An RNA of 177 nucleotides, treated with DMS and 2A3 and read out base by base. Conditions: 150 mM KOAc, 10 mM MgCl2 and 150 mM bicine (pH 8.5), 24 C. The DMS profile rests on 2,645 reads. For 2A3, 2,782 sequencing reads were counted. DMS adducts were read by reverse transcription with MarathonRT.
[RMDB]
RNA sequence: GGGAACGACUCGAGUAGAGUCGAAAAAACAGCGUUAAUGUUUGAACUGCGGAAAGUGGGAAGUUCAUCUUGCACAACGUUAACAAGAUUGUCCGAUUUUAGCCGAUUCAGAAGAUCAGAAAGAACACACCAUCUACGUAUUCGUACGUAGAUGGUGAAAAGAAACAACAACAACAAC
Reactivity to DMS in 0.01 (KOAc 150mM, MgCl2 10mM, bicine 150mM(pH8.5), 24C), signal-to-noise 3, nucleotides 027 to 126: a080a030c050a050g000c130g010u010u000a060a040u000g020u010u000u000g000a060a050c070u010g010c050g010g010a060a050a100g010u010g030g000g000a110a110g010u020u000c090a050u010c060u000u020g000c080a150c090a070a080c100g030u010u000a050a060c050a070a100g010a040u000u010g000u000c030c010g000a060u000u000u010u000a080g010c050c010g000a100u000u000c070a080g010a090a060g000a040u000c050a050g010a080a060a070g010a070a070c200a200
Reactivity to 2A3 in 0.01 (KOAc 150mM, MgCl2 10mM, bicine 150mM(pH8.5), 24C), signal-to-noise 3, nucleotides 027 to 126: a000a000c040a010g020c010g030u010u030a050a030u080g040u020u050u070g030a070a010c030u070g000c040g060g060a070a050a030g070u120g040g060g010a070a030g010u040u050c030a020u010c020u040u080g040c040a020c020a090a080c090g040u030u060a020a040c020a030a050g050a120u060u080g040u030c030c030g030a050u000u070u000u110a050g010c010c010g020a020u030u050c030a050g070a160a030g020a120u090c030a010g160a060a140a010g100a060a000c070a000